Chemical mapping of a 207-nucleotide RNA with 2A3. Reactivities are rounded to 0.1 and cut off at 0 and 3. It was measured as part of the RMDB library OK3TST. For 2A3 the reverse transcriptase was SuperScript II with manganese.
RNA sequence: GGGAACGACUCGAGUAGAGUCGAAAAGCGGGUGAAGGUGUCACGUUCAGCGUCCGGCUGAUAAAUACAGGUCAGGAAUUUAGCUGCAUUUUCUUCAGUUUUGAUUUCUUCCCAUACGAAGGAAUCCAUACCGUUAACUUUGCAAGCUACCAUGAUGCGGGAGUAUGGUAUUCGUACCAUACUCCCGAAAAGAAACAACAACAACAAC
Reactivity to 2A3 in 0.01 (KOAc 150mM, MgCl2 10mM, bicine 150mM(pH8.5), 24C), signal-to-noise 2, nucleotides 027 to 156: g050c030g010g000g050u050g020a010a020g040g040u080g050u100c060a040c120g030u070u080c000a000g000c000g100u100c130c030g050g000c030u020g040a040u130a050a080a070u270a060c010a010g060g000u100c030a030g050g170a120a060u130u130u070a060g000c000u000g010c000a020u010u000u030u080c110u050u060c020a000g020u020u040u080u060g030a030u010u010u000c000u000u000c000c150c090a070u080a170c050g000a000a000g000g000a000a000u020c020c010a010u020a020c000c000g040u040u030a030a040c030u060u060u060g020c020a050a020g030c000u030a030c010c020a110u050g040a070u130g080